This 177-nucleotide RNA was probed chemically with DMS.
Source: RMDB library OK2TST, as collected in RNAgym.
Conditions: 150 mM KOAc, 10 mM MgCl2 and 150 mM bicine (pH 8.5), 24 C.
RNA sequence: GGGAACGACUCGAGUAGAGUCGAAAAGGUGGACCGUCGGGCGGCUGCAGCGCCUUCGAAUUCCAUCGUUGAGUGCCCUUGUGCUCCCGAUGCCGCAAGUCCGGAGCUGGGUUUCGUUACGGUCGAGCACUAGGGGUAGUUUCGACUACCCCUAGUGAAAAGAAACAACAACAACAAC
Reactivity to DMS in 0.01 (KOAc 150mM, MgCl2 10mM, bicine 150mM(pH8.5), 24C), signal-to-noise 5, nucleotides 027 to 126: g010g020u000g010g020a050c120c070g020u000c120g020g010g010c060g010g010c030u010g030c090a080g010c030g000c030c010u000u000c050g010a080a120u010u000c070c080a070u000c020g010u010u000g010a130g020u010g020c010c090c090u010u000g010u000g000c010u000c000c070c080g010a060u010g000c080c100g010c100a080a100g000u000c030c150g000g010a110g010c040u000g010g010g010u010u010u010c020g000u010u010a070c070g000g000u000c050g000a120g010